[RMDB]
An RNA of 170 nucleotides, treated with DMS and 2A3 and read out base by base. The RNA was probed in 150 mM KOAc, 10 mM MgCl2 and 150 mM bicine (pH 8.5) at 24 C. The data come from the RNA Mapping Database (RMDB), library 15KLIB. 2A3 adducts were read by reverse transcription with SuperScript II with manganese. DMS adducts were read by reverse transcription with MarathonRT.

RNA sequence: GGGAACGACUCGAGUAGAGUCGAAAAAGGGAGUCUCUAAUAUUCCCAUCGGGAACCUAUUACUGUGUCACCACUAAGGCUAAGUCCGUUCAACAAGAUCUUGACGUUAUUUUGCCUGGUGAGUUUUGAGCCGUUGACUUCGGUCAACGGAAAAGAAACAACAACAACAAC
Reactivity to DMS in 0.01 (KOAc 150mM, MgCl2 10mM, bicine 150mM(pH8.5), 24C), signal-to-noise 2, nucleotides 027 to 129: a060g050g030g010a120g020u010c040u010c130u000a130a170u070a010u030u010c010c000c000a080u060c130g030g040g000a110a000c050c070u010a000u050u030a000c120u080g030u040g050u040c020a040c050c010a000c020u070a000a000g010g030c000u040a090a040g000u030c220c050g000u070u010c020a000a000c130a130a060g010a110u050c140u000u030g010a030c060g050u020u010a030u000u000u000u000g010c070c010u030g010g060u000g060a080g030u000u000u000u000g030a210g050
Reactivity to 2A3 in 0.01 (KOAc 150mM, MgCl2 10mM, bicine 150mM(pH8.5), 24C), signal-to-noise 4, nucleotides 027 to 129: a000g070g020g000a100g080u020c020u000c010u090a080a190u030a010u050u000c000c000c010a040u060c050g000g010g010a010a020c010c060u030a130u120u120a150c090u060g020u070g040u210c020a040c030c000a000c020u070a150a080g020g000c020u000a000a000g030u000c000c000g050u130u090c030a030a080c030a070a070g120a170u090c020u010u010g000a030c000g000u040u100a070u040u020u010u010g000c000c000u000g000g000u020g020a080g000u030u030u060u080g080a070g020